RNA sequence: GGGAACGACUCGAGUAGAGUCGAAAACACCACCGUUAUUCUGGAAAGUGUCGGUGACAGAGACCACCCGGCGUGUGAAGUCAUUCUUUCCGUUCUGUUUUUUUACAAAAACCGUAUGCAGCGCGAAAUGCAAAGACCAUUUCGAUGGUCUUUGCAUAAAAGAAACAACAACAACAAC
Reactivity to 2A3 in 0.01 (KOAc 150mM, MgCl2 10mM, bicine 150mM(pH8.5), 24C), signal-to-noise 3, nucleotides 027 to 126: c080a010c010c030a050c020c030g060u050u090a090u240u090c070u100g110g040a090a090a040g070u070g020u060c010g000g020u040g020a020c040a030g100a020g060a040c020c000a050c010c050c000g040g000c080g030u020g010u070g100a080a010g050u050c010a080u110u060c040u020u050u010c010c030g030u090u050c030u040g030u000u030u000u000u000u010u010a050c080a000a100a030a020a010c010c010g000u020a040u130g060c010a040g000c000g000c000g030a080a080
Reactivity to DMS in 0.01 (KOAc 150mM, MgCl2 10mM, bicine 150mM(pH8.5), 24C), signal-to-noise 2, nucleotides 027 to 126: c040a150c040c020a110c020c020g040u010u000a050u000u050c050u000g010g040a100a040a090g020u010g000u000c100g010g090u060g000a030c120a050g000a070g000a090c020c010a070c040c020c050g020g040c080g000u000g000u020g020a120a080g000u010c140a060u010u000c000u010u000u010c050c000g040u000u000c010u000g000u000u020u000u010u000u000u030a090c160a000a050a020a010a030c060c140g000u020a060u020g000c040a020g000c030g000c020g010a040a100